[RMDB]
Conditions: 150 mM KOAc, 10 mM MgCl2 and 150 mM bicine (pH 8.5), 24 C. Chemical mapping of a 207-nucleotide RNA with 2A3 and DMS. The DMS profile rests on 4,120 reads. The 2A3 profile rests on 2,325 reads. As a SHAPE reagent, 2A3 marks flexible, mostly unpaired nucleotides at the ribose 2'-OH. Source: RMDB library OK3TST, as collected in RNAgym.
RNA sequence: GGGAACGACUCGAGUAGAGUCGAAAAGCAUGUUUAUGUGAACCUAAGUAUGAAUUUCAGUGACUGUAGAUUAGAAGUACUGAUUAUAGCAUAGGCUGCUUGGUGUUCACUUUAUUUGCAUCUGUGAGUUUCCAACAAGCCCUAAGUUUACUGACAACACCCAUACUAUGUUCGCAUAGUAUGGGUGAAAAGAAACAACAACAACAAC
Reactivity to 2A3 in 0.01 (KOAc 150mM, MgCl2 10mM, bicine 150mM(pH8.5), 24C), signal-to-noise 5, nucleotides 027 to 156: g000c010a010u060g030u020u090u100a110u150g020u000g010a010a010c000c020u010a020a020g020u040a100u280g080a170a160u060u040u030c020a010g020u050g200a120c030u080g090u260a090g090a300u130u150a100g060a230a000g020u020a010c010u020g010a020u040u020a080u100a070g050c070a070u090a180g070g110c010u010g000c000u010u000g010g020u090g020u020u020c000a000c000u030u080u000a070u030u050u060g010c020a030u010c080u010g030u030g050a040g050u060u070u050c010c010a010a020c030a050a040g050c020c010c050u070a070a030g000u030u020u060a140c040u030g080a020c030a050a000
Reactivity to DMS in 0.01 (KOAc 150mM, MgCl2 10mM, bicine 150mM(pH8.5), 24C), signal-to-noise 2, nucleotides 027 to 156: g030c020a050u000g030u020u000u000a030u010g040u000g000a050a070c060c030u000a040a070g030u000a090u000g020a060a150u000u010u010c050a040g030u000g020a080c050u000g040u000a060g010a260u000u000a080g010a090a180g020u000a150c010u000g000a070u000u010a100u000a090g020c020a150u000a130g020g000c010u000g010c010u010u010g020g000u000g010u000u000c030a020c000u000u010u000a040u010u000u000g020c030a140u000c110u010g000u000g000a040g050u000u000u000c010c000a060a120c060a120a140g010c010c000c020u000a050a200g000u000u000u010a100c020u010g010a070c060a080a300